[RMDB]
RNA sequence: GGGAACGACUCGAGUAGAGUCGAAAAAUUCUGUACAUAAAAGUCGAAAGUAUUGCUAUAGUCAAGGUUGCGCUUGCCUAUUUAGGCAUACUUCUCAGGAUGGCGCGUUGCAGUCCAACAAGAUCCAAAAACAACGGCCACUUCGGUGGCCGUUGAACAUCAUUUGAUUGUUCGCAAUCAAAUGAUGAAAAGAAACAACAACAACAAC
Reactivity to 2A3 in 0.01 (KOAc 150mM, MgCl2 10mM, bicine 150mM(pH8.5), 24C), signal-to-noise 2, nucleotides 027 to 156: a000u090u000c020u030g100u180a010c010a090u300a160a160a090a060g100u100c070g030a070a020a000g010u000a030u020u240g000c000u020a000u000a000g000u010c000a010a000g000g000u140u100g090c110g010c010u020u000g000c000c000u030a030u070u240u120a030g010g030c000a000u010a000c000u050u000c020u000c050a010g010g060a020u040g050g000c010g000c010g040u050u060g020c020a020g040u000c010c000a030a010c060a060a050g060a190u150c090c030a060a010a000a060a080c000a000a000c010g000g050c020c000a000c020u060u090c160g030g020u030g140g250c030c040g010u000u000g000a000a000
Reactivity to DMS in 0.01 (KOAc 150mM, MgCl2 10mM, bicine 150mM(pH8.5), 24C), signal-to-noise 1, nucleotides 027 to 156: a070u000u010c030u000g060u000a150c020a160u000a110a040a110a180g010u000c060g000a070a040a030g020u000a040u000u000g030c010u000a090u000a020g000u000c000a020a030g020g000u000u000g010c300g000c060u010u000g000c030c000u000a120u020u010u000a080g040g020c000a020u000a000c030u000u000c030u000c080a140g020g010a050u000g020g030c040g050c100g030u000u000g030c020a090g040u010c020c040a080a070c040a110a160g010a130u000c030c030a000a080a050a150a140c000a010a010c000g000g010c000c000a020c000u010u000c230g050g070u000g020g040c020c040g040u010u000g010a000a150